An RNA of 207 nucleotides, treated with 2A3 and read out base by base. Reactivities are given for positions 27 through 156. The RNA was probed in 150 mM KOAc, 10 mM MgCl2 and 150 mM bicine (pH 8.5) at 24 C. For 2A3, 694 sequencing reads were counted.
RNA sequence: GGGAACGACUCGAGUAGAGUCGAAAAGCGCAGCCUGGUCGAGGGGCUGGUGCGUCAGAUCGAACGGCCGGGCUCUCCUCACUUGCAAUUGGUCGUGCACGGGAAAGUCGAACUCAUCUCAAACGCCUGACACCCACGCCUUCGGCCGGCCGGACUAGCGAAGCACAUUAUUCGUAAUGUGCUUCGCAAAAGAAACAACAACAACAAC
Reactivity to 2A3 in 0.01 (KOAc 150mM, MgCl2 10mM, bicine 150mM(pH8.5), 24C), signal-to-noise 1, nucleotides 027 to 156: g040c070g030c060a050g000c020c060u200g000g030u000c010g000a000g010g040g030g000c020u000g000g020u140g000c010g030u000c000a000g010a080u100c040g090a080a030c000g090g020c040c090g030g020g040c020u000c000u000c000c030u070c010a120c110u100u150g050c030a070a300u170u180g050g030u040c020g020u020g050c080a030c060g040g000g000a050a090a020g050u080c020g040a070a040c000u040c080a150u030c060u010c150a220a220a030c030g060c000c000u000g000a000c010a010c030c010c000a040c180g000c040c000u040u000c000g000g000c000c010g010g000c000c000g070g000a040c050u030a000